Source information
This 177-nucleotide RNA was probed chemically with 2A3 and DMS. The RNA was probed in 150 mM KOAc, 10 mM MgCl2 and 150 mM bicine (pH 8.5) at 24 C. As a SHAPE reagent, 2A3 marks flexible, mostly unpaired nucleotides at the ribose 2'-OH. For DMS, 10,983 sequencing reads were counted.
RNA sequence: GGGAACGACUCGAGUAGAGUCGAAAAGAUAUGGAGUGCAGAGCUUGGAUUUAUAGUCACAGGUCAAGUGGUUCGGAAACGAACCACUUGACUCACAGCUAUUGUCAGCUCGUGCACUCCUAAGUCACAUAAGACCUAUGUUCGCAUAGGUCUUAUGAAAAGAAACAACAACAACAAC
Reactivity to 2A3 in 0.01 (KOAc 150mM, MgCl2 10mM, bicine 150mM(pH8.5), 24C), signal-to-noise 1, nucleotides 027 to 126: g030a020u070a050u180g000g000a000g020u020g000c000a010g010a020g030c050u250u300g080g030a070u190u300u000a020u040a020g060u120c020a040c080a150g050g000u010c000a010a000g000u000g020g000u010u010c060g000g090a080a130a100c020g000a000a000c000c000a000c000u000u010g000a010c000u000c000a010c000a000g000c020u020a000u030u010g000u000c000a000g010c000u000c010g000u040g010c050a000c000u000c000c000u010a000a000g000u000c000a000
Reactivity to DMS in 0.01 (KOAc 150mM, MgCl2 10mM, bicine 150mM(pH8.5), 24C), signal-to-noise 8, nucleotides 027 to 126: g010a040u010a300u010g000g010a010g020u010g010c010a230g000a010g000c010u000u020g040g010a030u000u010u000a000u000a010g010u010c060a140c300a300g000g000u000c000a010a010g030u000g000g010u000u000c000g010g000a120a100a240c010g010a020a010c010c000a000c000u000u000g010a010c000u000c030a100c300a290g010c010u000a010u000u000g010u000c010a030g010c000u000c010g010u010g010c000a010c000u000c000c000u000a000a060g010u010c040a270